[RMDB]
RNA sequence: GGGAACGACUCGAGUAGAGUCGAAAAGAUUUUCGAGGAAAUACUCCCAAGAAGUUCCCGGAGGGAUCCAAGAGACGGACGACUUUCCCCUAUUGGUUGGGAAAAGUCCCGGAACCAGGAAAUGGGACAGCCUUGUGAUUCGUCACAAGGAAAAGAAACAACAACAACAAC
Reactivity to DMS in 0.01 (KOAc 150mM, MgCl2 10mM, bicine 150mM(pH8.5), 24C), signal-to-noise 9, nucleotides 027 to 129: g020a070u020u010u010u010c040g010a080g020g020a080a080a120u040a060c070u010c000c080c140a080a060g030a090a170g010u000u000c030c010c010g020g010a070g040g000g000a070u040c020c030a030a120g000a060g020a100c080g000g020a060c100g020a050c030u030u010u010c020c000c010c050u040a120u050u080g040g040u040u030g010g020g020a020a010a030a050g000u020c000c000c000g020g010a070a090c030c040a060g000g040a030a090a090u030g020g000g030a050c090a090g010
Reactivity to 2A3 in 0.01 (KOAc 150mM, MgCl2 10mM, bicine 150mM(pH8.5), 24C), signal-to-noise 9, nucleotides 027 to 129: g050a020u050u060u040u070c020g010a030g020g050a040a100a020u080a130c030u030c010c010c020a010a030g070a030a010g010u020u020c000c000c000g010g020a030g020g020g010a040u030c030c010a060a020g030a010g020a050c020g020g000a010c050g000a000c050u010u010u010c010c000c000c010u060a190u200u290g160g030u110u090g010g000g000a030a050a000a030g000u000c000c000c000g010g030a020a020c030c000a020g060g050a030a080a060u090g020g010g030a030c020a010g040
The data come from the RNA Mapping Database (RMDB), library 15KLIB. An RNA of 170 nucleotides, treated with DMS and 2A3 and read out base by base. The reactions ran in a buffer of 150 mM KOAc, 10 mM MgCl2 and 150 mM bicine (pH 8.5), at 24 C. For 2A3, 60,598 sequencing reads were counted. 2A3 adducts were read by reverse transcription with SuperScript II with manganese.